[RMDB]
Source information
Chemical mapping of a 177-nucleotide RNA with DMS and 2A3. 2A3 adducts were read by reverse transcription with SuperScript II with manganese. The DMS profile rests on 4,052 reads. It was measured as part of the RMDB library OK2TST. The RNA was probed in 150 mM KOAc, 10 mM MgCl2 and 150 mM bicine (pH 8.5) at 24 C. DMS (dimethyl sulfate) methylates the pairing face of unpaired adenines and cytosines. For 2A3, 1,567 sequencing reads were counted.

RNA sequence: GGGAACGACUCGAGUAGAGUCGAAAAGCCGACCUCGCCCCACGCACCCCACGCAAUCGCGCUGACCGGCAGGCCCUGGGCGCGGCGCCAGUGCGCGAAGACGUCGACCCAGCUGUUGGCCGCCGCGCCAGGACGCAUGCUUCGGCAUGCGUCCUGGAAAAGAAACAACAACAACAAC
Reactivity to DMS in 0.01 (KOAc 150mM, MgCl2 10mM, bicine 150mM(pH8.5), 24C), signal-to-noise 3, nucleotides 027 to 126: g010c040c020g000a130c030c010u000c050g000c030c020c020c020a080c110g020c060a120c030c020c010c020a100c110g000c080a080a050u000c070g040c020g020c050u000g000a090c060c030g000g000c030a060g010g010c070c130c030u000g030g000g020c030g000c000g010g010c010g010c010c010a060g000u000g010c060g010c020g000a080a080g000a080c050g020u010c050g020a170c010c000c010a190g010c070u000g000u000u000g000g000c050c050g030c110c020g000c040g010
Reactivity to 2A3 in 0.01 (KOAc 150mM, MgCl2 10mM, bicine 150mM(pH8.5), 24C), signal-to-noise 1, nucleotides 027 to 126: g050c040c020g030a150c020c020u040c060g030c020c000c000c000a020c010g000c030a030c000c040c000c000a020c040g000c000a020a120u100c030g000c000g010c070u030g050a130c000c000g000g020c050a070g050g070c040c010c000u060g000g050g010c100g000c000g060g000c000g060c000c050a060g150u070g070c080g030c010g110a040a040g070a040c040g020u080c030g050a120c000c000c010a010g010c030u060g020u100u020g020g000c020c010g000c010c000g030c020g000